RNA sequence: GGGAACGACUCGAGUAGAGUCGAAAAACAAAACUGCGAAGGGGGGACGGAGAAGGCUAUGUUGGCCGGGCGACGGUUGUCCCCGUUUAAGCGUGUAGGCUGGUUUUCCAGGAAAAGAAAAAAAAAAUCUAGUUACUAGUUUCGACUAGUAACUAGAAAAAGAAACAACAACAACAAC
Reactivity to DMS in 0.01 (KOAc 150mM, MgCl2 10mM, bicine 150mM(pH8.5), 24C), signal-to-noise 1, nucleotides 027 to 126: a070c010a070a020a130a040c060u020g020c020g010a120a090g030g020g000g010g000g000a020c050g000g010a050g000a300a140g000g000c010u020a090u040g020u020u000g000g020c050c020g000g020g000c270g010a010c040g000g000u000u000g000u010c010c000c020c020g020u000u000u000a050a170g030c010g000u000g020u010a030g000g020c040u000g020g000u000u000u000u000c030c010a170g020g000a040a090a050a080g010a010a010a010a000a000a050a030a080a160a160